[RMDB]
Conditions: 150 mM KOAc, 10 mM MgCl2 and 150 mM bicine (pH 8.5), 24 C. This 177-nucleotide RNA was probed chemically with DMS and 2A3. It was measured as part of the RMDB library OK1LIB.
RNA sequence: GGGAACGACUCGAGUAGAGUCGAAAACUCCUUCACGGUUACGUCUGUCUCUGGCAGAGCAGACUGUCAGGAGGAAGAGGUCACCAUCUUCACGAAGCCAAAGCCAAAUUCCGCCUUGUCCUGUAAACCUGAUUAUGAUAUUCGUAUCAUAAUCAGGAAAAGAAACAACAACAACAAC
Reactivity to DMS in 0.01 (KOAc 150mM, MgCl2 10mM, bicine 150mM(pH8.5), 24C), signal-to-noise 8, nucleotides 027 to 126: c050u010c000c000u000u010c120a090c080g000g000u020u030a040c140g000u000c010u000g010u040c010u030c050u020g010g000c090a070g010a040g020c050a060g000a060c000u010g020u000c100a050g010g000a060g000g010a190a060g000a070g010g010u000c040a080c060c040a090u010c030u010u020c050a100c090g010a110a110g000c030c030a070a090a100g000c020c030a030a110a120u010u010c020c030g000c010c020u000u000g010u010c020c020u000g000u030a060a090a140
Reactivity to 2A3 in 0.01 (KOAc 150mM, MgCl2 10mM, bicine 150mM(pH8.5), 24C), signal-to-noise 9, nucleotides 027 to 126: c020u020c010c000u060u080c090a080c110g080g010u100u160a030c040g060u010c010u020g130u060c010u010c030u160g120g000c050a020g010a030g020c020a030g000a060c010u010g020u020c030a040g010g040a030g020g010a040a030g040a020g030g020u050c010a020c060c010a060u040c020u070u070c040a030c080g050a040a010g010c000c010a090a030a010g010c010c010a030a090a090u070u010c010c000g020c020c000u050u050g030u030c010c010u060g090u200a050a070a090
Values cover nucleotides 27 to 126.